This 207-nucleotide RNA was probed chemically with 2A3 and DMS. Source: RMDB library PDB130, as collected in RNAgym. For DMS, 5,333 sequencing reads were counted. For DMS the reverse transcriptase was MarathonRT. The reactions ran in a buffer of 150 mM KOAc, 10 mM MgCl2 and 150 mM bicine (pH 8.5), at 24 C.

RNA sequence: GGGAACGACUCGAGUAGAGUCGAAAACGGCUCUGAAGGAUGCCUGUGAGUGCAUGGCAUGAGGCAUGCGGCGGUGGUGCAUGGCCGUUUUAAAUGGAUGGCGUGAGCUUUGUCUUAAGUUGCGUAAGAUGUGAGACCCUUUGACGGUGUUCUACGGCAUCCACCAUAAGUUCGCUUAUGGUGGAUGAAAAGAAACAACAACAACAAC
Reactivity to 2A3 in 0.01 (KOAc 150mM, MgCl2 10mM, bicine 150mM(pH8.5), 24C), signal-to-noise 3, nucleotides 027 to 156: c050g010g000c030u020c030u110g050a050a020g090g010a030u060g010c020c020u050g050u070g060a120g040u140g010c060a070u070g040g000c030a040u070g060a080g070g050c020a010u110g060c020g070g020c040g010g030u050g010g040u020g010c030a050u060g050g000c000c020g010u010u020u010u030a040a070a050u130g060g000a020u040g030g010c000g030u030g020a020g000c000u030u030u080g010u020c000u020u040a080a040g020u060u040g040c030g050u050a060a030g020a060u090g010u010g030a030g020a040c010c000c000u040u060u110g030a060c090g020g000u040g030u010u010c030u060a020c020g040g010
Reactivity to DMS in 0.01 (KOAc 150mM, MgCl2 10mM, bicine 150mM(pH8.5), 24C), signal-to-noise 2, nucleotides 027 to 156: c040g040g000c000u000c050u010g040a110a140g000g000a090u010g010c000c010u010g010u000g020a110g030u000g000c050a130u010g000g000c010a090u010g000a070g050g050c000a120u000g000c030g000g010c060g030g000u010g000g000u000g010c030a080u000g010g040c010c020g000u020u010u000u000a000a110a110u000g010g000a100u010g020g010c010g020u020g010a090g010c050u000u000u000g010u000c030u010u010a070a140g000u010u010g000c040g000u010a030a090g020a050u000g010u000g020a130g000a070c030c010c030u000u000u000g010a110c080g020g020u000g020u000u000c020u010a050c050g030g000